[RMDB]
RNA sequence: GGGAACGACUCGAGUAGAGUCGAAAAAAGGAGCACGCUGAUGCAGGGGAAGCCAUCAACGGUAUACAGUUUGACAUCGACUAUGAUAGUAAGUUCCUCAAGUUCGUUCAGUCUCUUGGUAUGGAUCGCAAGUUUAACAUCUCUAAAGAGCACAAGGGCUAUGAGACUUUUUCGAAAGUCUCAUAGCAAAAGAAACAACAACAACAAC
Reactivity to DMS in 0.01 (KOAc 150mM, MgCl2 10mM, bicine 150mM(pH8.5), 24C), signal-to-noise 2, nucleotides 027 to 156: a110a060g000g020a080g040c060a070c030g040c030u000g010a100u010g070c050a110g000g000g000g000a030a130g020c060c030a050u010c040a040a080c040g020g020u000a100u000a090c060a080g000u000u080u000g010a110c110a110u010c010g010a060c020u000a070u020g010a130u000a060g010u010a070a120g010u000u000c010c030u000c040a070a100g030u000u000c040g010u000u010c020a110g000u000c020u000c030u000u000g000g030u010a070u000g000g010a150u000c030g030c060a040a120g020u010u000u010a040a120c050a120u000c010u000c040u000a030a060a060g000a030g020c020a070c040a050a060g000g040
Reactivity to 2A3 in 0.01 (KOAc 150mM, MgCl2 10mM, bicine 150mM(pH8.5), 24C), signal-to-noise 6, nucleotides 027 to 156: a000a000g040g010a050g030c040a010c050g040c030u030g010a020u040g020c060a060g000g020g030g000a020a020g030c050c000a040u030c020a020a060c050g040g000u060a050u040a100c050a040g030u050u080u080g090a030c030a060u050c020g020a020c040u080a060u220g060a040u030a020g070u070a110a090g010u030u020c010c000u010c030a010a060g030u060u070c020g010u040u050c030a030g070u020c020u000c000u020u010g010g010u080a060u110g020g010a030u030c010g010c080a040a010g010u000u040u060a070a020c030a050u010c010u000c000u100a100a100a020g030a020g010c040a010c020a100a040g070g030

This 207-nucleotide RNA was probed chemically with DMS and 2A3. Values cover nucleotides 27 to 156. Conditions: 150 mM KOAc, 10 mM MgCl2 and 150 mM bicine (pH 8.5), 24 C.